[RMDB]
The data come from the RNA Mapping Database (RMDB), library OK3TST.
An RNA of 207 nucleotides, treated with 2A3 and read out base by base.
The reactions ran in a buffer of 150 mM KOAc, 10 mM MgCl2 and 150 mM bicine (pH 8.5), at 24 C.
RNA sequence: GGGAACGACUCGAGUAGAGUCGAAAAAGGUGGAGCGAAGUCCCCAGGAUCAGACUUCGGUGUGUCUGCGGAUCAUCCUAGAGACCUUGUGAAAGUGCAGAUUCCUGGUAGGCAGGUUGGGGUGGGGCCCGGGAGUCUGCAUUUCUAGCAUGCUCCAGUACUUUUAGGAUUUCGAUCCUAAAAGUACAAAAGAAACAACAACAACAAC
Reactivity to 2A3 in 0.01 (KOAc 150mM, MgCl2 10mM, bicine 150mM(pH8.5), 24C), signal-to-noise 2, nucleotides 027 to 156: a000g070g040u040g010g000a020g000c020g010a070a000g040u020c010c010c010c010a020g040g020a070u110c050a020g030a050c060u070u080c220g040g080u120g010u050g020u050c010u030g010c100g060g000a040u070c010a020u020c030c010u020a020g020a020g020a110c020c060u060u080g040u010g100a090a030a030g050u010g000c000a000g010a020u010u030c010c020u030g000g050u110a100g030g030c110a050g060g030u140u220g070g030g000g070u130g010g020g010g000c010c000c010g020g000g000a000g000u000c010u020g000c000a000u000u000u000c010u020a010g010c010a020u040g000c000u000c000c000a000